[RMDB]
RNA sequence: GGGAACGACUCGAGUAGAGUCGAAAAGAUAUGGAACGAUCGUUACGGGACUAAGUAGGGAGCGAGCUAUCGGAAACGAUAGCAUCGCAUCGAUCUACUUAGUCCCGUAACGAGUCGUUCCUAAGUCCUACCAUCAAGAGUUCGCUCUUGAUGGUAGAAAAGAAACAACAACAACAAC
Reactivity to DMS in 0.01 (KOAc 150mM, MgCl2 10mM, bicine 150mM(pH8.5), 24C), signal-to-noise 4, nucleotides 027 to 126: g000a110u000a300u010g010g000a010a000c010g000a100u000c000g010u000u000a010c010g010g000g000a020c000u000a000a010g010u000a010g000g000g010a020g050c000g030a060g000c000u000a010u000c000g010g010a100a060a130c000g000a030u000a000g010c000a030u000c010g030c000a300u000c230g010a030u010c000u000a010c000u000u000a010g000u010c000c000c000g000u010a000a000c000g010a010g020u000c000g020u000u000c000c000u000a020a080g010u010c040
This 177-nucleotide RNA was probed chemically with DMS. The DMS profile rests on 11,580 reads. The reactions ran in a buffer of 150 mM KOAc, 10 mM MgCl2 and 150 mM bicine (pH 8.5), at 24 C. Values cover nucleotides 27 to 126. For DMS the reverse transcriptase was MarathonRT.